Source information
This 207-nucleotide RNA was probed chemically with 2A3 and DMS. The reactions ran in a buffer of 150 mM KOAc, 10 mM MgCl2 and 150 mM bicine (pH 8.5), at 24 C. For 2A3, 2,125 sequencing reads were counted. Values cover nucleotides 27 to 156. DMS adducts were read by reverse transcription with MarathonRT.
RNA sequence: GGGAACGACUCGAGUAGAGUCGAAAAAUCCUCAGGUUCAUAAGCGUGAUGAUUGGGUGUACAUGCUCCAUGCAUGACAUGUGCCUCCUUUGAACCUUGUUACGACCUUGGCACAUUACCCAUCUGAAAAAGACGUUCGCGUUCGCGCGAACGUCAACUAACGUUUGAUCUUCGGAUCAAACGUUAGAAAAGAAACAACAACAACAAC
Reactivity to 2A3 in 0.01 (KOAc 150mM, MgCl2 10mM, bicine 150mM(pH8.5), 24C), signal-to-noise 3, nucleotides 027 to 156: a010u010c000c000u030c020a010g010g000u000u000c000a000u070a210a080g030c110g110u090g130a120u030g010a020u130u200g020g000g000u070g030u070a090c000a000u000g010c020u100c190c100a130u280g000c020a010u020g010a050c020a020u010g000u000g000c000c000u040c000c000u000u000u010g000a000a000c000c000u020u060g070u070u110a080c070g060a100c040c040u050u070g020g010c000a010c000a000u060u110a020c000c020c010a010u030c020u040g060a090a040a040a060a080g010a000c000g000u000u010c010g010c000g030u050u040c230g000c020g000c000g090a000a000c000g000u000c000a000a000
Reactivity to DMS in 0.01 (KOAc 150mM, MgCl2 10mM, bicine 150mM(pH8.5), 24C), signal-to-noise 1, nucleotides 027 to 156: a080u000c000c000u010c060a050g020g000u010u020c000a100u000a070a090g050c100g000u000g010a190u000g010a070u000u000g010g060g010u000g050u020a140c020a030u000g000c000u010c170c160a120u030g020c020a060u000g020a120c080a170u000g010u010g000c010c010u010c070c040u000u000u000g010a050a010c010c000u000u000g010u010u000a160c160g030a110c130c100u000u000g040g010c000a020c020a110u000u000a050c000c020c030a060u000c040u020g000a080a100a150a120a110g000a030c000g060u000u000c000g030c000g010u000u000c300g000c030g060c000g030a000a000c030g000u020c000a010a040